[RMDB]
RNA sequence: GGGAACGACUCGAGUAGAGUCGAAAAGAUCAAUUAUGAUUGCAAUGUAAUAUGUCAAGGCAGACAUAUCUAGCUGUCGCCUUAGCUAGAGAUCGCCGAUUUAUUGCUUUCAUAAGAACGGCUAGAACAUUAUACCCACUUUCGAGUGGGUAUAAUGAAAAGAAACAACAACAACAAC
Reactivity to 2A3 in 0.01 (KOAc 150mM, MgCl2 10mM, bicine 150mM(pH8.5), 24C), signal-to-noise 6, nucleotides 027 to 126: g050a090u130c050a010a070u030u010a010u020g020a000u000u020g000c010a000a010u060g060u240a100a050u110a080u260g180u130c070a060a050g040g000c040a040g030a070c040a050u140a060u020c000u010a010g000c000u010g090u130c040g170c040c030u070u060a010g010c010u020a010g010a020g010a110u060c050g010c050c020g020a010u030u030u040a010u000u020g000c000u020u020u000c000a010u020a030a000g050a070a020c020g050g030c060u060a030g040a140a010
Reactivity to DMS in 0.01 (KOAc 150mM, MgCl2 10mM, bicine 150mM(pH8.5), 24C), signal-to-noise 6, nucleotides 027 to 126: g010a120u010c060a100a160u010u000a010u000g010a010u000u000g000c000a020a010u010g010u010a050a050u010a070u000g020u010c200a100a110g010g010c020a100g030a030c260a080u010a300u000c000u000a010g010c000u000g010u000c180g010c200c110u010u010a010g020c000u000a020g000a050g010a090u000c060g010c030c030g000a060u000u000u000a030u000u000g000c000u000u000u000c010a000u000a000a010g010a090a110c180g010g010c060u010a070g010a110a200